[RMDB]
RNA sequence: GGGAACGACUCGAGUAGAGUCGAAAACAUUAGCCGUUCGCGGCUAAUGCCGACUGUCUUGUUUGAUGGUAGAGUGGAUGGACAGGUAGACCUUUUUAGAAAUCGCCCAUUCAUUCGUGAAUGGGAAAGACAGGGUUUAGUUCGCUAAACCCUGUCUAAAAGAAACAACAACAACAAC
Reactivity to 2A3 in 0.01 (KOAc 150mM, MgCl2 10mM, bicine 150mM(pH8.5), 24C), signal-to-noise 1, nucleotides 027 to 126: c010a000u000u000a000g010c000c010g020u030u030c300g040c040g080g030c010u000a010a000u020g000c000c000g070a080c050u050g060u000c010u080u140g070u180u080u180g160a090u100g010g030u100a040g040a060g130u060g000g020a080u030g020g000a010c000a000g060g020u020a020g050a050c020c040u020u070u050u060u100a140g090a050a090a010u210c100g010c010c000c000a000u000u000c000a000u010u050c050g030u000g020a010a000u030g000g000g070a000a070
Reactivity to DMS in 0.01 (KOAc 150mM, MgCl2 10mM, bicine 150mM(pH8.5), 24C), signal-to-noise 1, nucleotides 027 to 126: c000a010u000u000a010g030c000c000g010u000u020c180g040c010g000g010c000u000a000a000u000g020c040c070g010a120c060u000g010u030c070u000u000g010u000u030u010g000a080u000g010g000u000a060g010a100g000u000g000g010a070u000g010g010a020c040a020g000g000u010a090g000a140c040c020u010u000u020u000u000a080g020a100a070a080u010c200g000c000c000c000a010u000u000c000a000u000u010c160g000u010g010a010a020u000g000g000g000a010a010